The data come from the RNA Mapping Database (RMDB), library OK2TST. Chemical mapping of a 177-nucleotide RNA with DMS.

RNA sequence: GGGAACGACUCGAGUAGAGUCGAAAAUUUGUGCGUCAUCCCCUCCAGUAUUCAAGUCAGCCCAAGGUACUUCGAUGGUUCCCGUCUGCACAUGGGGAAACCGAGGCACAGAAAGCAGACUCAUGUGCGGUAAGGGGACUUUCGAGUCCCCUUACCGAAAAGAAACAACAACAACAAC
Reactivity to DMS in 0.01 (KOAc 150mM, MgCl2 10mM, bicine 150mM(pH8.5), 24C), signal-to-noise 1, nucleotides 027 to 126: u010u010u010g030u020g000c040g030u030c040a130u000c090c010c000c020u000c030c030a150g020u030a020u010u000c090a050a030g020u000c060a070g000c020c040c030a110a160g010g010u000a030c060u000u000c030g000a050u030g000g000u000u000c000c000c010g010u000c080u040g010c000a020c050a030u030g030g030g020g000a080a160a050c040c130g000a150g070g050c050a020c100a100g000a010a150a150g000c100a050g000a270c010u000c010a030u000g000u000g010

For DMS, 784 sequencing reads were counted.